[RMDB]
RNA sequence: GGGAACGACUCGAGUAGAGUCGAAAAAACGGAAAAUGGCGAGAACAAUUGAGUCAGAAGUUUGAAGAAAUAAGGUGGCUGAUUGAAGAAGUAAGACAUAGAUUGAAAAUUACAGAAAACAGCUUCGAACAGAUAACGUUUAUGCAAGCCUUACAACCGCGUUAGAUAAAUUCGUUUAUCUAACGCGAAAAGAAACAACAACAACAAC
Reactivity to 2A3 in 0.01 (KOAc 150mM, MgCl2 10mM, bicine 150mM(pH8.5), 24C), signal-to-noise 1, nucleotides 027 to 156: a000a010c120g010g030a090a100a020a050u100g060g000c030g040a120g010a090a010c060a090a120u120u140g030a050g020u010c040a010g040a090a020g030u060u160u090g070a050a020g020a030a040a040u190a030a050g020g000u010g000g010c000u010g040a170u120u020g020a030a000g010a020a020g040u020a020a010g000a010c030a090u080a000g020a090u060u080g040a140a000a000a000u020u050a010c040a020g040a010a000a060a000c030a010g000c020u000u000c000g000a030a000c050a010g040a100u080a090a040c030g010u080u050u000a000u000g010c040a000a050g000c010c000u040u020a040c050a120a000c120
Reactivity to DMS in 0.01 (KOAc 150mM, MgCl2 10mM, bicine 150mM(pH8.5), 24C), signal-to-noise 2, nucleotides 027 to 156: a060a060c010g020g020a060a040a050a050u000g030g040c020g020a140g000a100a090c100a080a110u020u000g020a170g000u000c050a120g000a090a100g030u020u000u000g020a080a120g010a080a100a090u000a060a070g010g030u000g040g000c040u000g020a150u000u030g000a050a100g000a100a170g030u000a070a080g010a090c020a060u000a080g000a130u000u000g000a070a070a080a100u000u000a170c050a160g000a070a020a030a060c040a190g030c080u010u000c030g000a050a100c090a100g000a080u010a060a060c020g010u010u000u010a050u010g000c010a010a150g020c020c040u000u010a040c030a040a130c150